[RMDB]
RNA sequence: GGGAACGACUCGAGUAGAGUCGAAAAAAGUUGAUAUGGAUUUACUCCGAGGAGACGAACUACCACGAACAGGGGUAACUCUACCCGUGGCGUCUCCGUUUGACGAGUAAGUCCUACGUCAACAAAAGCAUAAAUAAUUGUUCGCAAUUAUUUAUGCAAAAGAAACAACAACAACAAC
Reactivity to DMS in 0.01 (KOAc 150mM, MgCl2 10mM, bicine 150mM(pH8.5), 24C), signal-to-noise 4, nucleotides 027 to 126: a070a090g010u010u000g010a040u000a160u000g000g000a020u000u000u010a010c010u000c000c010g010a090g010g020a030g000a010c010g000a070a050c140u010a300c020c000a020c010g010a040a260c140a030g000g000g000g000u000a090a090c020u010c010u000a090c180c070c020g020u000g000g000c010g000u010c000u000c000c000g020u000u000u010g010a140c300g010a020g000u000a000a000g000u000c010c010u000a020c160g000u000c010a010a010c020a070a050a080a090
Reactivity to 2A3 in 0.01 (KOAc 150mM, MgCl2 10mM, bicine 150mM(pH8.5), 24C), signal-to-noise 3, nucleotides 027 to 126: a000a000g010u010u000g000a020u020a030u090g000g000a000u000u000u020a000c000u010c010c000g010a030g000g000a000g020a000c010g010a050a020c060u160a040c080c010a010c010g020a070a010c040a090g030g000g010g010u020a050a050c010u020c020u040a030c020c030c010g000u000g010g000c000g000u000c000u000c010c010g000u030u040u060g010a000c000g000a000g000u000a000a000g000u000c000c000u000a000c020g000u000c000a000a000c000a010a060a000a010
The data come from the RNA Mapping Database (RMDB), library 15KREP. This 177-nucleotide RNA was probed chemically with DMS and 2A3.